Structure probing data (DMS) for a 177-nucleotide construct. For DMS, 974 sequencing reads were counted.

RNA sequence: GGGAACGACUCGAGUAGAGUCGAAAAGGAAAGAUGGUGGAGCAAGGGCUGUGGUCCAUUACUUCUAGGUUUUCAAGGGUGAGGUUUAAACACAGGCAUACAAGGGGGUAAUGUGUGCACAAAAACAUACUACCCAAAACUUCGGUUUUGGGUAGUAAAAAGAAACAACAACAACAAC
Reactivity to DMS in 0.01 (KOAc 150mM, MgCl2 10mM, bicine 150mM(pH8.5), 24C), signal-to-noise 2, nucleotides 027 to 126: g010g000a050a140a160g000a040u000g030g010u000g040g000a060g010c080a150a120g010g000g040c060u000g000u000g000g010u020c030c030a070u000u000a050c050u030u010c050u020a100g000g000u000u020u000u000c120a200a120g000g000g020u000g000a120g030g010u000u000u000a110a060a020c130a050c130a170g010g010c020a020u000a010c030a050a110g020g000g000g020g000u000a040a020u010g030u000g020u000g020c060a070c170a020a040a060a050a030c240a140
The reactions ran in a buffer of 150 mM KOAc, 10 mM MgCl2 and 150 mM bicine (pH 8.5), at 24 C. For DMS the reverse transcriptase was MarathonRT.